An RNA of 177 nucleotides, treated with 2A3 and DMS and read out base by base. High 2A3 reactivity points to a flexible backbone, as in loops and unpaired stretches. In probing experiments dimethyl sulfate is read out at A N1 and C N3, which are open when not base-paired. Conditions: 150 mM KOAc, 10 mM MgCl2 and 150 mM bicine (pH 8.5), 24 C. Values cover nucleotides 27 to 126.
RNA sequence: GGGAACGACUCGAGUAGAGUCGAAAAGAUAUGGAGUAACAAUCUGCGCUUCGAAGAACUCGGAAACGAGGGAGAAGCGAACUACAGAGUGUUACUCCUAAGUCAAAGAAUCCCUUCGGGGAUUCAACCUACAUGUCGUGUUCGCACGACAUGUAGGAAAAGAAACAACAACAACAAC
Reactivity to 2A3 in 0.01 (KOAc 150mM, MgCl2 10mM, bicine 150mM(pH8.5), 24C), signal-to-noise 1, nucleotides 027 to 126: g000a010u100a010u140g020g010a010g000u020a000a020c000a010a040u010c000u020g000c020g010c010u000u000c010g170a300a100g030a120a070c020u020c010g000g000a090a110a020c020g000a000g070g010g030a060g000a020a010g000c000g000a000a020c050u170a040c000a010g020a020g040u000g000u000u000a000c000u000c000c000u010a030a000g000u010c000a000a030a120g020a010a000u000c010c030c000u020u050c280g000g000g030g000a000u030u000c010a000a030
Reactivity to DMS in 0.01 (KOAc 150mM, MgCl2 10mM, bicine 150mM(pH8.5), 24C), signal-to-noise 1, nucleotides 027 to 126: g000a020u010a300u010g000g010a010g000u000a010a000c000a000a020u000c000u010g000c010g010c010u010u010c000g000a120a090g050a090a170c010u010c000g020g000a060a110a180c000g010a010g000g020g030a100g000a020a020g040c010g000a020a020c060u010a300c020a010g000a010g000u000g000u000u000a000c000u000c000c000u000a000a040g020u000c030a090a070a180g010a020a020u010c000c030c000u010u010c220g010g000g030g000a010u010u000c000a060a070